Structure probing data (2A3) for a 177-nucleotide construct. Reactivities are given for positions 27 through 126. The RNA was probed in 150 mM KOAc, 10 mM MgCl2 and 150 mM bicine (pH 8.5) at 24 C. It was measured as part of the RMDB library OK1LIB. The 2A3 profile rests on 302 reads.
[RMDB]
RNA sequence: GGGAACGACUCGAGUAGAGUCGAAAACGUUGGCUCGUGGAUUAUGGGCCUCCGCGGCGUGCUGCCUCUUACGCUGCUGAUGGUUGCGUGGUCGUCGUGGUGCGGAACGACGCUCGUGGCGAAGGGGGGUACCUCGCGUGUUCGCACGCGAGGUACCAAAAGAAACAACAACAACAAC
Reactivity to 2A3 in 0.01 (KOAc 150mM, MgCl2 10mM, bicine 150mM(pH8.5), 24C), signal-to-noise 1, nucleotides 027 to 126: c060g000u050u000g070g060c020u000c150g000u020g260g000a130u300u110a120u300g000g000g000c000c000u010c000c000g020c000g000g110c000g050u160g130c130u130g110c000c000u080c000u020u100a060c100g010c000u200g000c010u000g000a230u300g000g120u230u230g000c000g060u060g110g160u070c100g000u010c020g040u040g040g000u100g060c000g010g040a020a020c000g030a000c050g010c000u010c000g000u010g000g080c060g050a130a000g000g000g000g000